[RMDB]
RNA sequence: GGGAACGACUCGAGUAGAGUCGAAAAUGGCUCCAGCUUCAUAGGAAGGCUCUUGUCUGUCAGGCAGUGGAGUUACUUACAGACAAGAGCCUUGCUCAGGCCAGCCCAAAAGCUGACUUCGGUCAGCGUCCAAAUCAUCCUUCGGGAUGAUUUGGACAAAAGAAACAACAACAACAAC
Reactivity to DMS in 0.01 (KOAc 150mM, MgCl2 10mM, bicine 150mM(pH8.5), 24C), signal-to-noise 1, nucleotides 027 to 126: u000g010g030c010u020c080c300a030g020c100u030u010c170a130u010a120g010g000a040a020g020g010c030u000c020u000u020g020u000c000u000g000u000c150a020g000g020c070a120g010u010g000g010a150g020u000u000a030c010u000u000a000c000a040g000a040c010a010a010g000a000g030c000c020u000u000g010c020u000c150a190g000g020c010c020a090g020c010c000c030a070a080a050a100g020c000u010g000a020c020u000u030c150g060g000u010c000a030g020c010